[RMDB]
RNA sequence: GGGAACGACUCGAGUAGAGUCGAAAAAAAACAUUGCUUUUAAUGUUGUUAAACAAGGCCAUUUUAUUGGUGUUGAGGGUGAACUACCUGUAGCUGUAGUCAAUGAUAAGAUCUUCACCAAGAGUGGGAGCCACCUUGUUCGCAAGGUGGAAAAGAAACAACAACAACAAC
Reactivity to DMS in 0.01 (KOAc 150mM, MgCl2 10mM, bicine 150mM(pH8.5), 24C), signal-to-noise 6, nucleotides 027 to 129: a070a060a070a020c130a000u050u010g030c150u020u040u020u010a020a060u000g000u000u000g000u000u020a060a090a050c140a090a080g000g000c020c020a040u010u000u000u000a140u050u000g000g000u000g020u000u000g000a050g030g060g050u040g000a090a010c000u000a020c010c020u050g000u000a080g050c200u000g000u020a010g040u000c050a080a060u010g030a080u050a110a080g000a090u020c010u030u050c030a000c040c000a010a040g010a060g000u040g000g000g000a120g020
Reactivity to 2A3 in 0.01 (KOAc 150mM, MgCl2 10mM, bicine 150mM(pH8.5), 24C), signal-to-noise 5, nucleotides 027 to 129: a000a000a000a010c120a050u110u120g080c080u070u170u070u100a130a080u130g000u000u000g040u010u070a040a060a060c070a100a060g110g010c010c020a030u020u030u040u060a140u020u020g000g000u010g000u010u030g020a050g000g080g040u100g040a090a020c010u010a000c010c030u080g120u190a040g020c150u110g020u000a000g010u020c030a080a080u110g100a040u040a120a060g040a060u000c000u010u020c000a010c010c000a000a000g020a010g020u000g000g020g020a010g030